[RMDB]
RNA sequence: GGGAACGACUCGAGUAGAGUCGAAAAAUCAAGCAGAUGAUGGCAUGCCUUUAGUUAUGCUACAUACGACUGACUUAAGGAAAAAAGCAGUUUAUUCAUUUAUGGCGAUGAUGGAGCAAAUACACGCUAUGACCCUACGUUUCGACGUAGGGUCAUAAAAAGAAACAACAACAACAAC
Reactivity to DMS in 0.01 (KOAc 150mM, MgCl2 10mM, bicine 150mM(pH8.5), 24C), signal-to-noise 2, nucleotides 027 to 126: a010u000c080a040a230g000c040a070g010a050u000g000a030u010g010g030c000a040u000g010c000c060u050u080u070a080g010u000u000a050u000g020c000u000a000c240a060u050a010c030g010a090c010u000g000a060c010u000u090a070a040g010g000a000a060a030a030a000a050g000c010a020g020u030u000u010a020u040u000c080a080u000u000u020a000u060g000g000c020g100a050u000g000a160u000g010g000a010g090c130a040a020a000u020a110c180a040c100g000c060
Reactivity to 2A3 in 0.01 (KOAc 150mM, MgCl2 10mM, bicine 150mM(pH8.5), 24C), signal-to-noise 2, nucleotides 027 to 126: a000u140c040a050a000g020c020a040g030a120u050g060a030u040g010g020c000a050u100g050c010c000u140u140u110a040g000u150u040a120u220g000c000u040a070c000a160u160a030c090g090a130c070u000g040a040c010u000u130a020a070g110g080a050a130a040a030a030a000g000c040a050g060u000u020u050a120u040u080c000a000u040u000u160a130u280g090g000c100g040a160u040g000a000u010g000g070a010g120c030a060a050a050u100a030c060a000c020g020c000